An RNA of 177 nucleotides, treated with 2A3 and DMS and read out base by base. 2A3 adducts were read by reverse transcription with SuperScript II with manganese. The 2A3 profile rests on 2,231 reads.
RNA sequence: GGGAACGACUCGAGUAGAGUCGAAAACAACAAAUCAAUGCCUCACUGCCUUUUACCUUCUUUUAGGUUAGUUGCAAUGUUGACACAGACAUUUAGAAGAUGGUAUGUCUGAAGGGACUUAUGUUUACGGACUAACUAGAUUCGUCUAGUUAGUCCGAAAAGAAACAACAACAACAAC
Reactivity to 2A3 in 0.01 (KOAc 150mM, MgCl2 10mM, bicine 150mM(pH8.5), 24C), signal-to-noise 3, nucleotides 027 to 126: c030a020a030c050a010a160a040u170c100a000a120u120g030c000c000u030c010a050c020u020g040c010c000u040u060u070u090a040c000c000u070u010c000u010u110u050u070a020g010g050u060u030a050g050u110u090g030c010a060a200u140g070u070u080g090a040c030a000c000a090g030a020c000a020u050u090u110a080g010a080a000g070a060u100g020g050u080a030u080g040u000c040u060g000a060a030g060g020g010a010c000u120u170a150u140g130u060u110u020a060
Reactivity to DMS in 0.01 (KOAc 150mM, MgCl2 10mM, bicine 150mM(pH8.5), 24C), signal-to-noise 4, nucleotides 027 to 126: c050a110a120c130a080a130a090u010c100a100a060u010g000c020c010u000c040a080c070u010g020c030c040u000u000u000u010a030c030c010u000u000c140u000u000u000u000a040g020g020u000u000a070g000u000u010g000c040a100a090u010g020u000u010g000a100c080a120c040a120g000a060c060a040u010u000u000a080g010a070a080g010a050u010g010g000u000a020u000g010u000c030u000g000a100a090g010g000g000a060c060u000u000a050u010g020u000u000u010a220
Conditions: 150 mM KOAc, 10 mM MgCl2 and 150 mM bicine (pH 8.5), 24 C. The data come from the RNA Mapping Database (RMDB), library OK2TRN.